Annotation
The record gives the reactivity of an RNA of 207 nucleotides to 2A3 and DMS. Source: RMDB library M2RFPK, as collected in RNAgym. 2A3 adducts were read by reverse transcription with SuperScript II with manganese. DMS adducts were read by reverse transcription with MarathonRT. The RNA was probed in 150 mM KOAc, 10 mM MgCl2 and 150 mM bicine (pH 8.5) at 24 C.

RNA sequence: GGGAACGACUCGAGUAGAGUCGAAAAUCCACUAUGAAUCUAGUCACUAAAUAAACACAAUUAGCUACUGUGUGUAAUAGUGAGUGUUGAUAACACAAAAUAAUCGUAUAGUUUUGGAAGAUUAUACGCGCCCUUGCUCCGUUCGCGGAGCAAGGAAGCAGUGAGAGAGGUUCGCCUCUCUCACUGCAAAAGAAACAACAACAACAAC
Reactivity to 2A3 in 0.01 (KOAc 150mM, MgCl2 10mM, bicine 150mM(pH8.5), 24C), signal-to-noise 5, nucleotides 027 to 156: u010c010c010a030c070u200a200u240g110a120a080u050c100u090a060g090u010c000a000c000u010a030a030a080u050a020a040a010c010a000c010a010a100u130u090a100g050c070u180a050c040u020g000u000g000u000g010u030a020a030u010a020g010u000g020a020g010u030g000u040u050g090a160u190a270a020c040a000c020a050a070a040a060u180a050a090u120c000g000u020a010u010a020g020u010u040u100u150g160g060a140a080g000a070u010u000a000u020a030c020g040c010g060c040c000c000u010u000g000c000u010c010c010g020u040u020c130g000c000g090g000a000g000c000a000a000g000g000a000a000
Reactivity to DMS in 0.01 (KOAc 150mM, MgCl2 10mM, bicine 150mM(pH8.5), 24C), signal-to-noise 2, nucleotides 027 to 156: u000c010c010a210c170u000a160u010g000a140a130u000c070u010a110g010u000c010a040c010u010a010a060a060u000a170a190a040c000a000c010a050a050u000u020a300g000c130u000a060c060u000g030u000g000u000g010u000a130a300u000a000g010u010g020a080g040u000g020u000u010g000a090u000a130a150c050a070c020a060a040a090a100u010a080a110u000c020g080u000a010u000a020g010u000u000u000u010g030g000a180a130g000a020u000u000a010u000a020c060g010c100g020c050c000c000u020u000g000c010u000c000c000g030u000u000c280g010c010g070g010a020g000c010a000a000g000g000a030a080